[RMDB]
RNA sequence: GGGAACGACUCGAGUAGAGUCGAAAAGACUUGUGGUUCGCCACAAGUCAAAUAAGCAUGUAGAAAAGGCCAAACUACAUGCAUCGAAAGAAAGGCCAUAAAAAAGGACAUGCUUCGGCAUGUCCAAGGUCAAACUAAAGUUCGCUUUAGUUUGACCAAAAGAAACAACAACAACAAC
Reactivity to DMS in 0.01 (KOAc 150mM, MgCl2 10mM, bicine 150mM(pH8.5), 24C), signal-to-noise 2, nucleotides 027 to 126: g000a010c000u010u000g010u000g000g030u000u000c180g010c030c010a030c000a000a010g010u000c000a010a050a080u010a040a120g000c000a000u020g000u000a010g000a070a020a060a160g010g010c000c000a130a140a120c010u000a010c000a010u000g000c000a050u000c190g000a080a120a120g010a040a100a060g020g020c000c040a110u040a020a050a040a120a050a080g010g000a010c000a000u010g000c000u000u020c300g040g000c000a000u000g000u000c000c000a030a000
Reactivity to 2A3 in 0.01 (KOAc 150mM, MgCl2 10mM, bicine 150mM(pH8.5), 24C), signal-to-noise 5, nucleotides 027 to 126: g000a010c000u000u000g000u010g020g060u050u080c220g050c060c000a000c010a000a010g000u000c000a000a000a000u010a000a010g000c000a000u010g000u000a000g050a090a100a040a040g020g000c010c010a030a030a010c010u000a000c000a000u000g030c010a060u180c040g200a110a150a110g140a090a110a060g010g000c030c030a010u160a010a100a000a000a010a030g000g000a000c000a000u000g000c030u050u100c250g090g000c000a000u000g010u000c000c000a000a010